[RMDB]
RNA sequence: GGGAACGACUCGAGUAGAGUCGAAAAUUCGGCUUCGGCCGAACGAACCGGGGUCUCCGUUGAAAUUGUCAGCGAUUGGACUGAAGCCUCCACGGUCCAAAUCGCUUGGAUUUAUGGAGGAGACGGAGGCACCCUCGUUAUUGCGUUCGCGCAAUAACACUGUCAGUACGUUCGCGUACUGACAGUGAAAAGAAACAACAACAACAAC
Reactivity to 2A3 in 0.01 (KOAc 150mM, MgCl2 10mM, bicine 150mM(pH8.5), 24C), signal-to-noise 4, nucleotides 027 to 156: u010u000c000g000g000c010u060u070c240g200g000c010c010g010a000a010c010g030a060a020c030c050g010g000g000g000u000c000u000c000c000g000u020u050g170a110a090a090u190u170g180u250c060a010g000c000g010a030u030u060g010g000a000c000u020g090a100a040g050c010c030u040c030c020a040c020g010g000u000c000c000a050a090a060u020c030g000c010u010u110g000g010a000u020u130u130a160u160g140g010a080g010g050a030g000a010c000g000g000a000g020g010c010a300c010c000c000u050c030g020u020u020a000u000u020g010c020g010u010u070c280g000c010g000c100a010a000u000a020a000
Reactivity to DMS in 0.01 (KOAc 150mM, MgCl2 10mM, bicine 150mM(pH8.5), 24C), signal-to-noise 2, nucleotides 027 to 156: u000u010c000g000g040c030u000u000c300g040g030c000c000g010a010a010c040g020a110a140c070c040g000g000g090g040u000c000u000c010c000g090u000u020g000a110a130a080u000u020g030u010c050a070g000c020g000a110u010u000g030g020a060c000u000g010a050a170g000c040c010u010c020c030a290c040g000g030u000c000c000a000a030a120u010c040g030c070u000u000g000g010a090u000u000u000a110u010g020g010a080g020g010a260g000a030c030g020g010a060g040g000c010a080c030c000c020u000c090g040u000u000a020u000u000g000c000g010u000u020c120g020c120g070c020a060a050u000a050a130
This 207-nucleotide RNA was probed chemically with 2A3 and DMS.
For 2A3 the reverse transcriptase was SuperScript II with manganese.
The data come from the RNA Mapping Database (RMDB), library RNAMAK.